Overview: This 177-nucleotide RNA was probed chemically with 2A3 and DMS. DMS adducts were read by reverse transcription with MarathonRT. For 2A3, 9,762 sequencing reads were counted.

RNA sequence: GGGAACGACUCGAGUAGAGUCGAAAAGAAGGAUAGUUCGCUAUCCUUCAAACCCACCGUAAGGCAAAUGUGUUAGAUGCCCUCUAACACAUAAACCGGGCAAAACAGUACCGUUCGCGGUACUGAACACUACAAAAACGUUCGCGUUUUUGUAGUGAAAAGAAACAACAACAACAAC
Reactivity to 2A3 in 0.01 (KOAc 150mM, MgCl2 10mM, bicine 150mM(pH8.5), 24C), signal-to-noise 3, nucleotides 027 to 126: g010a000a000g000g000a000u000a000g020u030u060c120g000c100u000a010u010c000c000u010u000c000a000a000a000c000c000c010a010c010c040g080u070a090a110g050g020c050a090a120a060u000g010u000g000u000u000a010g000a040u300g050c020c060c010u000c000u010a000a010c000a010c000a000u020a010a000a000c010c000g000g040g020c070a030a040a060a120c000a010g000u000a000c010c010g020u020u080c260g000c010g090g000u000a000c000u000g000a020a010
Reactivity to DMS in 0.01 (KOAc 150mM, MgCl2 10mM, bicine 150mM(pH8.5), 24C), signal-to-noise 4, nucleotides 027 to 126: g000a020a000g010g000a000u000a010g000u010u000c230g030c010u000a000u010c000c000u000u010c010a000a140a130c000c000c010a150c130c100g000u000a110a130g010g020c030a060a240a020u000g010u000g010u020u010a010g000a040u030g000c240c290c130u000c010u000a000a000c000a020c000a010u010a010a150a110c040c010g000g000g020c180a090a050a100a140c010a000g000u000a000c000c000g020u000u020c200g020c030g020g010u000a000c000u000g010a090a150
For DMS, 3,365 sequencing reads were counted.